The record gives the reactivity of an RNA of 177 nucleotides to DMS and 2A3. For DMS, 15,275 sequencing reads were counted. For 2A3 the reverse transcriptase was SuperScript II with manganese. DMS (dimethyl sulfate) methylates the pairing face of unpaired adenines and cytosines. It was measured as part of the RMDB library M2PK50. For DMS the reverse transcriptase was MarathonRT.
[RMDB]
RNA sequence: GGGAACGACUCGAGUAGAGUCGAAAAACGAUGUCGUUCGCGACAUCGUAAAUUGUAUAACCUUGCUUGAAGUCUACUUGGUUGUAAAGCGAGACAAGUCAGUGAGAGUCCUAUUCGUAGGACUCAACAUAAUUAAAUCUUUCGAGAUUUAAUUAUGAAAAGAAACAACAACAACAAC
Reactivity to DMS in 0.01 (KOAc 150mM, MgCl2 10mM, bicine 150mM(pH8.5), 24C), signal-to-noise 8, nucleotides 027 to 126: a020c000g010a010u000g020u000c000g030u000u010c230g020c010g010a010c000a000u000c000g020u000a010a040a060u000u010g010u010a090u010a110a180c080c010u000u000g010c010u000u000g000a080a140g000u010c010u000a080c080u000u010g010g010u000u000g000u010a060a020a030g010c090g000a040g000a190c050a060a070g000u010c070a070g010u010g010a170g000a020g010u000c000c000u000a020u000u010c170g000u000a010g000g000a000c000u000c010a020a110
Reactivity to 2A3 in 0.01 (KOAc 150mM, MgCl2 10mM, bicine 150mM(pH8.5), 24C), signal-to-noise 5, nucleotides 027 to 126: a010c000g000a010u010g000u010c020g020u040u050c160g010c000g100a000c000a000u000c000g010u000a000a010a020u090u070g070u020a140u020a150a060c010c000u000u010g010c010u010u040g020a050a010g020u030c010u030a120c080u300u220g080g030u070u050g050u080a020a020a010g020c030g010a010g000a020c050a100a080g070u110c070a030g060u050g200a160g000a000g080u000c000c000u010a030u010u060c190g040u020a000g000g000a000c000u000c000a000a000